[RMDB]
The data come from the RNA Mapping Database (RMDB), library OK1LIB. This 177-nucleotide RNA was probed chemically with 2A3. The reactions ran in a buffer of 150 mM KOAc, 10 mM MgCl2 and 150 mM bicine (pH 8.5), at 24 C.
RNA sequence: GGGAACGACUCGAGUAGAGUCGAAAAUGAACCAUCUUCUUUUACACCAAAACGUUGUGCUUGUAAUAAUAAAUCAGCUGCUUUUUGAUCAUGUGCUAAUGUGUAUGCCGUUGGUGGUAAGAAACCACCUGCGGCGUCUGUUCGCAGACGCCGCAGGAAAAGAAACAACAACAACAAC
Reactivity to 2A3 in 0.01 (KOAc 150mM, MgCl2 10mM, bicine 150mM(pH8.5), 24C), signal-to-noise 1, nucleotides 027 to 126: u120g100a060a120c000c000a010u080c010u020u010c000u060u170u110u000a000c020a000c050c010a160a000a000a000c020g000u040u000g020u030g050c070u000u210g050u000a040a020u100a140a070u040a080a120a150u010c030a020g000c000u030g050c020u020u210u000u060u060g010a050u110c050a030u190g040u000g070c040u070a040a220u020g030u000g000u040a050u220g030c050c020g050u020u000g000g000u040g000g070u030a040a070g030a000a060a110c000c000a000